Source: RMDB library OK1LIB, as collected in RNAgym. Chemical mapping of a 177-nucleotide RNA with DMS and 2A3. The RNA was probed in 150 mM KOAc, 10 mM MgCl2 and 150 mM bicine (pH 8.5) at 24 C. Reactivities are given for positions 27 through 126. The 2A3 profile rests on 1,813 reads.
[RMDB]
RNA sequence: GGGAACGACUCGAGUAGAGUCGAAAAGAUUCAGCGAGUGAUUCAGACUCAGGUAGUGACUCCGAUUCAUCAAGUGAUUCAGAUUCCGAUUCAACGAGUGACACAGGAUCAGACAACGACUCAGACAGUAGAGCGAUUUGUUCGCAAAUCGCUCUACAAAAGAAACAACAACAACAAC
Reactivity to DMS in 0.01 (KOAc 150mM, MgCl2 10mM, bicine 150mM(pH8.5), 24C), signal-to-noise 2, nucleotides 027 to 126: g010a020u040u040c010a070g000c100g080a100g090u000g010a020u040u000c080a110g010a120c050u000c070a100g020g040u000a000g000u010g030a140c020u000c010c130g000a050u000u010c040a070u000c020a080a130g010u000g020a000u020u010c000a060g000a180u090u000c000c020g030a060u040u020c060a130a120c040g000a000g010u020g000a100c140a050c060a020g050g000a050u030c020a000g000a040c050a040a180c300g010a050c000u000c030a130g000a090c150a090
Reactivity to 2A3 in 0.01 (KOAc 150mM, MgCl2 10mM, bicine 150mM(pH8.5), 24C), signal-to-noise 3, nucleotides 027 to 126: g010a050u090u060c010a000g010c030g060a060g080u090g040a080u080u020c030a010g050a120c000u000c010a010g140g020u060a050g050u020g060a040c030u000c030c000g030a020u060u010c000a050u040c050a120a140g070u050g060a090u040u010c010a010g020a060u090u040c040c030g070a060u040u130c040a070a040c020g020a020g060u080g020a000c010a000c000a100g050g020a040u130c000a000g100a060c020a090a030c040g090a040c000u000c040a010g030a070c040a000